[RMDB]
RNA sequence: GGGAACGACUCGAGUAGAGUCGAAAAGCUCUGGAAUCUAAAGUCUCUCCAUGUAAAUGCUGUUGUGUAAGACAGUGUGAAUUGGCUAAAGUCAGGCCCAGAGAAGUUAGGGCAUUUCACUGAGGUCUACUCUGAUUAUGUUCGCAUAAUCAGAGUAAAAAGAAACAACAACAACAAC
Reactivity to DMS in 0.01 (KOAc 150mM, MgCl2 10mM, bicine 150mM(pH8.5), 24C), signal-to-noise 7, nucleotides 027 to 126: g010c030u000c010u000g010g010a090a090u010c040u010a090a110a130g010u000c020u000c030u000c000c040a070u010g010u010a080a150a070u010g010c010u000g000u000u000g020u010g020u010a110a130g000a020c010a040g010u000g020u000g010a070a090u000u000g010g010c160u000a040a090a070g010u000c130a060g010g000c040c010c030a100g010a100g010a050a040g010u000u000a070g000g000g010c060a080u000u000u000c030a070c050u000g010a130g010g010u000c050
Reactivity to 2A3 in 0.01 (KOAc 150mM, MgCl2 10mM, bicine 150mM(pH8.5), 24C), signal-to-noise 4, nucleotides 027 to 126: g010c010u000c020u030g070g060a110a100u020c030u090a170a040a080g040u010c000u000c010u000c040c020a040u060g020u130a000a100a060u060g000c010u000g010u050u030g080u020g130u170a040a040g010a010c000a010g000u000g020u010g100a060a090u040u050g030g000c040u110a120a030a030g070u050c030a020g040g010c000c010c020a010g010a010g030a110a020g050u070u160a040g000g030g020c040a030u020u030u050c040a030c040u030g050a040g040g070u010c010